[RMDB]
RNA sequence: GGGAACGACUCGAGUAGAGUCGAAAAGAGCGGCGGCGCGCGGCGCAGGUGGCGCCGGUGGCGGCCCCGGUACCGCAACCGGUUGGGCUGCGUCAGGUGCUGGUGCCGGCGCGGAAGCCGGCGGCGCCGACGGGAUACGGUUCGCCGUAUCCCGUCGAAAAGAAACAACAACAACAAC
Reactivity to 2A3 in 0.01 (KOAc 150mM, MgCl2 10mM, bicine 150mM(pH8.5), 24C), signal-to-noise 1, nucleotides 027 to 126: g050a020g030c080g020g010c010g050g080c000g000c070g000c030g090g000c040g050c150a060g060g130u110g130g010c000g000c000c030g010g000u000g010g030c030g000g000c010c000c000c040g070g020u080a110c030c070g000c030a000a050c020c010g200g050u180u300g240g030g000c060u030g000c020g040u030c040a090g000g020u040g000c050u040g030g300u020g020c000c000g000g000c000g060c010g050g030a050a000g000c010c000g000g000c020g030g070c010g000c020
Reactivity to DMS in 0.01 (KOAc 150mM, MgCl2 10mM, bicine 150mM(pH8.5), 24C), signal-to-noise 1, nucleotides 027 to 126: g020a170g010c040g020g010c030g010g000c030g000c020g030c010g020g000c000g030c160a080g030g020u010g000g000c030g010c000c000g030g010u000g000g010c000g000g010c010c040c000c030g010g040u010a060c280c050g000c010a030a030c000c000g020g020u010u000g010g010g010c020u000g010c010g000u010c050a120g020g010u020g000c020u000g000g010u000g020c010c000g000g010c030g030c030g010g000a130a190g010c010c000g010g010c020g000g000c010g000c020

The data come from the RNA Mapping Database (RMDB), library OK2TRN. This 177-nucleotide RNA was probed chemically with 2A3 and DMS. 2A3 is a SHAPE reagent: it acylates the 2'-hydroxyl of flexible nucleotides of all four kinds. The reactions ran in a buffer of 150 mM KOAc, 10 mM MgCl2 and 150 mM bicine (pH 8.5), at 24 C. Reactivities are rounded to 0.1 and cut off at 0 and 3.